[RMDB]
RNA sequence: GGGAACGACUCGAGUAGAGUCGAAAAGGGGUCUGUGUGAAGUAGGUCGGGUCACUACCCACCGGACUUAGAAUUAACACUGAAGCCUCCACGGUGUUAAUUCUAAGUCCGAGGUGAUCUCUAGCGUGCCUACGGACCACACAGACGGAGGCACCCACCUUAUAAAAUCCUUCGGGAUUUUAUAAGGAAAAGAAACAACAACAACAAC
Reactivity to DMS in 0.01 (KOAc 150mM, MgCl2 10mM, bicine 150mM(pH8.5), 24C), signal-to-noise 1, nucleotides 027 to 156: g020g050g020g030u010c010u000g010u010g000u010g000a110a260g040u000a000g010g060u010c080g010g000g000u000c010a040c030u010a000c010c010c000a300c110c010g000g000a010c010u030u000a010g010a060a030u000u000a030a000c000a010c010u010g030a050a160g020c010c000u000c000c010a300c020g000g040u000g000u010u000a000a010u000u010c000u000a010a020g000u010c000c000g000a020g000g010u030g000a040u000c010u010c050u000a100g020c160g030u000g050c020c010u000a040c000g030g000a100c070c000a020c000a010c000a020g000a010c000g000g020a030g130g030c050a300c030c040c020a300
Reactivity to 2A3 in 0.01 (KOAc 150mM, MgCl2 10mM, bicine 150mM(pH8.5), 24C), signal-to-noise 2, nucleotides 027 to 156: g050g010g010g010u000c010u000g000u000g010u010g050a210a180g010u010a000g010g020u040c090g070g000g000u010c000a000c010u080a080c030c070c050a020c010c010g000g000a000c010u000u000a000g000a000a010u000u010a000a000c000a000c010u020g060a150a040g040c010c000u000c010c010a010c010g000g000u000g000u000u000a000a000u000u010c000u000a000a000g000u000c000c000g010a000g000g010u010g010a010u000c070u030c150u240a130g160c070g260u270g010c020c000u000a000c000g000g020a050c090c000a000c000a000c000a010g020a000c010g000g010a010g000g000c000a040c000c000c000a020

This 207-nucleotide RNA was probed chemically with DMS and 2A3.
Reactivities are given for positions 27 through 156.
For DMS, 2,104 sequencing reads were counted.
It was measured as part of the RMDB library RNAMAK.
The RNA was probed in 150 mM KOAc, 10 mM MgCl2 and 150 mM bicine (pH 8.5) at 24 C.